An RNA of 177 nucleotides, treated with 2A3 and DMS and read out base by base.
Reactivities are given for positions 27 through 126.
For DMS the reverse transcriptase was MarathonRT.
It was measured as part of the RMDB library OK2TST.
For 2A3, 2,015 sequencing reads were counted.
[RMDB]
RNA sequence: GGGAACGACUCGAGUAGAGUCGAAAAGUUGACCGCAACGUGAACAUGCAGGUUAUCAGUAUCGGUAUGCACGGCAGAGACAUACUGAUGUUCACCCAGCCCGAGAGAUUUCAGGGUAUGGCGUACACCAAGUACAGCGUUUCGACGCUGUACUUGGAAAAGAAACAACAACAACAAC
Reactivity to 2A3 in 0.01 (KOAc 150mM, MgCl2 10mM, bicine 150mM(pH8.5), 24C), signal-to-noise 2, nucleotides 027 to 126: g060u060u070g060a090c000c030g000c040a030a050c080g050u020g010a020a010c000a020u070g000c040a030g120g000u050u040a040u100c040a000g000u080a050u050c020g000g000u050a040u030g050c070a040c170g070g060c100a020g090a010g020a050c020a040u030a020c000u040g020a040u010g030u000u000c000a020c020c020c010a010g010c020c010c010g160a170g010a020g050a220u070u300u070c060a040g010g000g020u110a300u030g000g050c000g000u060a040c060a030
Reactivity to DMS in 0.01 (KOAc 150mM, MgCl2 10mM, bicine 150mM(pH8.5), 24C), signal-to-noise 3, nucleotides 027 to 126: g010u000u000g020a040c060c040g010c030a030a080c130g000u000g010a050a060c050a190u000g010c040a110g000g000u000u010a030u000c120a150g000u010a090u010c030g010g000u000a030u010g020c100a140c120g000g010c080a100g000a180g020a110c090a020u000a030c030u000g000a050u000g020u000u000c060a030c010c020c020a050g000c020c000c010g010a100g000a090g010a180u010u000u010c010a190g010g000g030u000a050u000g010g010c300g020u010a100c140a140